Background:
The record gives the reactivity of an RNA of 177 nucleotides to DMS. For DMS the reverse transcriptase was MarathonRT. For DMS, 907 sequencing reads were counted. The RNA was probed in 150 mM KOAc, 10 mM MgCl2 and 150 mM bicine (pH 8.5) at 24 C. The data come from the RNA Mapping Database (RMDB), library OK2TRN.
RNA sequence: GGGAACGACUCGAGUAGAGUCGAAAAUUACACUGGUGAUAAUAUGGAACAACCGUUGUGUGUUUUAGGGAUUGAAACAACCUGUGAUGAUACAGGUCUUAGUAUUGUCAUUGAUCAAAAAAUCAAGAGUAUUCCUCGGAUUCGUCCGAGGAAUACUAAAAGAAACAACAACAACAAC
Reactivity to DMS in 0.01 (KOAc 150mM, MgCl2 10mM, bicine 150mM(pH8.5), 24C), signal-to-noise 2, nucleotides 027 to 126: u010u000a110c050a070c050u000g020g030u020g000a060u000a070a100u000a070u000g000g000a160a110c130a080a060c110c110g030u020u010g020u000g010u000g000u020u010u020u020a070g020g000g010a070u010u010g010a180a100a120c150a080a040c040c010u010g000u000g010a110u020g020a060u000a010c010a040g020g030u000c090u010u030a060g010u000a010u010u000g020u000c010a030u000u000g020a120u030c110a020a020a070a080a000a090u000c040a040a060g000